The record gives the reactivity of an RNA of 177 nucleotides to 2A3 and DMS.
For 2A3 the reverse transcriptase was SuperScript II with manganese.
The RNA was probed in 150 mM KOAc, 10 mM MgCl2 and 150 mM bicine (pH 8.5) at 24 C.
Reactivities are given for positions 27 through 126.
RNA sequence: GGGAACGACUCGAGUAGAGUCGAAAAGAAGGCACUUUCGAGUGCCUUCAUGGGGAGCUCAGGUCUCCCUCCCUUGCAAACUCCCUAACGGAGGAGACCUAAUUAGGUGCACUUUCGAGUGCACCAAUCAGACACACUUUUUCGAAAGUGUGUCUGAAAAAGAAACAACAACAACAAC
Reactivity to 2A3 in 0.01 (KOAc 150mM, MgCl2 10mM, bicine 150mM(pH8.5), 24C), signal-to-noise 3, nucleotides 027 to 126: g000a000a000g010g030c030a000c040u060u090u210c300g090a020g000u000g000c000c000u000u000c000a000u000g000g010g000g010a000g000c050u060c210a020g070g020u000c000u000c000c010c010u010c000c000c000u000u040g060c050a060a020a100c050u030c000c000c020u100a120a030c070g180g060a030g000g000a000g010a000c000c000u000a000a120u150u170a050g000g000u000g000c010a000c000u050u070u080c280g090a010g000u000g000c000a000c000c000a000a000
Reactivity to DMS in 0.01 (KOAc 150mM, MgCl2 10mM, bicine 150mM(pH8.5), 24C), signal-to-noise 2, nucleotides 027 to 126: g000a020a010g000g000c020a000c000u000u000u000c200g020a020g060u000g000c000c000u000u000c000a050u010g000g000g000g000a010g000c090u000c140a030g040g020u000c000u000c000c010c020u000c000c000c000u000u010g030c210a060a100a120c210u000c000c000c010u000a090a130c300g040g000a140g000g000a050g020a010c010c000u000a170a090u010u010a080g000g010u000g000c000a010c000u000u010u010c150g000a010g010u000g020c000a000c000c000a000a030